This 177-nucleotide RNA was probed chemically with 2A3.

RNA sequence: GGGAACGACUCGAGUAGAGUCGAAAAUUGUGAACUGAAACUGUUCACAUGAACCUGCAUUGAUUACGUCCCUGCCCCUGUACACACCGCCCGUCGCUACUACGGAUUGAAUUAUUUAGUGAGGUCUGCAACUUGAAGCCUUCGGGCUUCAAGUUGCAAAAGAAACAACAACAACAAC
Reactivity to 2A3 in 0.01 (KOAc 150mM, MgCl2 10mM, bicine 150mM(pH8.5), 24C), signal-to-noise 1, nucleotides 027 to 126: u100u070g070u000g020a070a000c000u010g020a300a000a000c290u230g000u000u000c000a000c000a000u020g000a050a160c000c080u000g000c000a020u010u130g020a070u070u300a070c010g040u060c000c000c000u020g000c000c040c040c000u050g160u170a000c060a000c000a000c000c050g000c010c010c000g020u010c020g000c000u000a000c000u040a000c080g030g000a020u010u000g000a050a120u030u080a120u110u210u000a060g000u020g060a000g000g120u120c000u010

Notes
Conditions: 150 mM KOAc, 10 mM MgCl2 and 150 mM bicine (pH 8.5), 24 C. For 2A3 the reverse transcriptase was SuperScript II with manganese.